[RMDB]
RNA sequence: GGGAACGACUCGAGUAGAGUCGAAAAGAUAUGGAUAGACUGACGAAGUGGAUCUACCGAUAAGCCUCGUAUCGGAAACGAUACAGGCUUUUGACGGUGGGCCCACUUCGUCAGUCUAUCCUAAGUCCAUAUUAGUUGCGUUCGCGCAACUAAUAUGAAAAGAAACAACAACAACAAC
Reactivity to DMS in 0.01 (KOAc 150mM, MgCl2 10mM, bicine 150mM(pH8.5), 24C), signal-to-noise 4, nucleotides 027 to 126: g010a100u000a300u010g000g000a010u010a000g010a020c000u010g010a000c010g000a020a000g040u000g000g000a040u000c000u000a020c000c000g020a190u000a040a020g010c000c010u010c300g040u000a000u000c000g020g000a110a100a190c000g000a010u000a010c000a020g000g010c010u000u000u000u000g020a140c130g010g030u000g000g010g010c070c010c000a010c000u010u000c000g000u010c000a000g000u000c000u000a000u000c000c000u000a020a080g010u000c040

An RNA of 177 nucleotides, treated with DMS and read out base by base. Source: RMDB library TTRINS, as collected in RNAgym. The RNA was probed in 150 mM KOAc, 10 mM MgCl2 and 150 mM bicine (pH 8.5) at 24 C.